[RMDB]
RNA sequence: GGGAACGACUCGAGUAGAGUCGAAAAGCAUAUGGUAUCAAACCAGUGGUUGAUGAUGUUGACAUAGGGUCAAUUGCAAGAGUGACAAAGAAACAAGCUUUGACCGCUUCUUUGUAUGAUCUAAACAGAGAAUACGUCCAUUCGUGGACGUAUUCUCAAAAGAAACAACAACAACAAC
Reactivity to DMS in 0.01 (KOAc 150mM, MgCl2 10mM, bicine 150mM(pH8.5), 24C), signal-to-noise 2, nucleotides 027 to 126: g000c080a070u000a110u000g010g000u000a090u020c200a090a150a110c020c010a070g010u010g000g000u000u010g000a120u010g030a070u030g010u000u010g030a080c100a070u000a100g040g030g030u000c020a020a100u000u000g020c030a050a060g000a070g000u010g010a120c040a010a000a030g030a050a090a150c300a070a140g000c050u010u000u000g020a120c080c060g000c020u000u000c040u000u000u000g000u000a070u030g020a050u000c020u000a050a100a080c250a110

This 177-nucleotide RNA was probed chemically with DMS.
DMS adducts were read by reverse transcription with MarathonRT.
Values are in units of 0.01, from 0 to 300, in steps of 10.